[RMDB]
RNA sequence: GGGAACGACUCGAGUAGAGUCGAAAAGAUAUGGAUAGGGACAUGUUGAUGUGUCGGAAACGACACACCAACAACAGCCCUCAUCCUAAGUCAAAUCGAUGCAUACUCUUCGGAGUAUGCAUCGAAACAUUAUAGAUCUCUUCGGAGAUCUAUAAUGAAAAGAAACAACAACAACAAC
Reactivity to 2A3 in 0.01 (KOAc 150mM, MgCl2 10mM, bicine 150mM(pH8.5), 24C), signal-to-noise 4, nucleotides 027 to 126: g020a010u070a020u130g000g000a010u010a010g000g000g020a050c090a220u100g010u000u000g000a020u000g000u000g000u010c010g020g010a060a070a020c010g000a000c000a000c010a000c000c000a000a010c000a020a020c040a030g060c000c000c010u000c010a020u000c000c010u030a120a040g070u070c060a030a030a190u040c000g000a000u000g000c000a000u010a000c010u020c000u050u110c300g070g000a000g000u000a000u000g000c000a000u000c000g000a000a000a000
Reactivity to DMS in 0.01 (KOAc 150mM, MgCl2 10mM, bicine 150mM(pH8.5), 24C), signal-to-noise 6, nucleotides 027 to 126: g000a040u000a300u000g000g010a010u000a020g000g010g020a040c060a170u000g000u000u010g010a020u000g010u000g010u000c000g010g010a090a060a200c000g010a010c000a000c010a000c010c000a010a000c000a020a050c290a130g000c000c000c000u000c150a000u000c000c000u010a040a130g000u000c030a070a120a130u000c000g000a010u000g000c010a010u000a000c000u000c000u000u010c210g010g000a020g010u000a000u000g000c000a000u000c000g000a000a060a150